[RMDB]
RNA sequence: GGGAACGACUCGAGUAGAGUCGAAAAGGUCAUCCUUCACAGGAUCGUGUGGAAGUCCUGCUCGGGGCGGAAGCAUUAAAACCAUUCGAGCUAGUCAAUGCGUGGCGUGUCUCUCCGCAGCGUGCUGUGUAUGAGAGUGGAUUCGUCCACUCUCAAAUAAACCGCUUUAGUUCGCUAAAGCGGUUUAAAAAGAAACAACAACAACAAC
Reactivity to DMS in 0.01 (KOAc 150mM, MgCl2 10mM, bicine 150mM(pH8.5), 24C), signal-to-noise 2, nucleotides 027 to 156: g010g040u000c050a100u000c010c000u000u000c100a130c030a110g000g040a020u000c120g000u030g010u000g010g000a240a130g010u010c010c000u070g000c100u000c100g000g000g000g030c020g020g020a190a150g010c060a060u010u000a030a110a110a070c000c040a130u000u010c100g010a150g030c040u000a120g040u010c080a090a090u000g020c090g050u000g020g000c130g010u000g010u010c040u000c010u000c030c040g030c030a050g000c030g030u020g000c000u000g020u020g010u020a110u000g000a030g010a060g070u010g010g000a090u000u000c250g020u010c000c000a000c000u000c000u000c000a040a040a110
Reactivity to 2A3 in 0.01 (KOAc 150mM, MgCl2 10mM, bicine 150mM(pH8.5), 24C), signal-to-noise 1, nucleotides 027 to 156: g090g010u090c030a010u120c030c000u000u240c040a030c030a110g140g000a180u060c060g020u050g000u020g050g030a050a060g030u040c010c000u070g050c060u040c060g050g020g000g020c050g000g010a020a000g000c010a000u060u140a070a020a010a010c040c010a040u080u110c040g000a010g000c170u180a070g160u030c030a030a060u060g070c070g100u010g000g070c000g020u010g050u020c010u000c000u030c100c010g000c000a040g130c050g000u030g100c040u040g010u030g030u060a190u100g000a000g000a000g000u020g010g000a010u030u150c140g000u020c030c000a010c000u010c000u000c000a000a000a000
An RNA of 207 nucleotides, treated with DMS and 2A3 and read out base by base. The RNA was probed in 150 mM KOAc, 10 mM MgCl2 and 150 mM bicine (pH 8.5) at 24 C. As a SHAPE reagent, 2A3 marks flexible, mostly unpaired nucleotides at the ribose 2'-OH.